[RMDB]
RNA sequence: GGGAACGACUCGAGUAGAGUCGAAAAGAUAUGGAUCGUUGGGAAGCGAUAAGAUGAGGUUCGGAAACGAACCUUCAUCUUUUGACGCUUUAAACGAUCCUAAGUCAAAACCGACGUUCGCGUCGGACUCUCUAAAAGUGUUCGCACUUUUAGAGAGAAAAGAAACAACAACAACAAC
Reactivity to DMS in 0.01 (KOAc 150mM, MgCl2 10mM, bicine 150mM(pH8.5), 24C), signal-to-noise 6, nucleotides 027 to 126: g010a060u000a300u010g000g000a000u000c000g020u000u000g010g020g010a020a010g020c010g020a160u000a010a010g010a010u000g010a050g010g010u000u000c000g010g000a090a100a220c000g020a010a000c010c010u000u010c010a010u000c000u000u000u000u010g010a220c070g010c000u000u010u000a150a020a020c000g000a000u000c000c010u000a010a100g000u000c020a140a070a150a130c000c000g010a020c000g020u010u020c280g050c030g010u000c000g010g000a130
Reactivity to 2A3 in 0.01 (KOAc 150mM, MgCl2 10mM, bicine 150mM(pH8.5), 24C), signal-to-noise 4, nucleotides 027 to 126: g020a020u070a020u100g010g010a000u010c030g010u010u030g300g300g110a020a000g000c020g040a050u030a170a010g010a000u010g000a000g000g020u020u000c010g030g000a080a050a060c010g010a000a000c000c000u020u090c000a010u000c000u000u010u000u030g020a020c010g000c000u020u010u020a040a020a000c000g000a000u000c000c010u010a020a010g020u010c040a030a030a140a240c000c000g000a000c010g010u070u140c300g020c020g130u000c000g000g050a060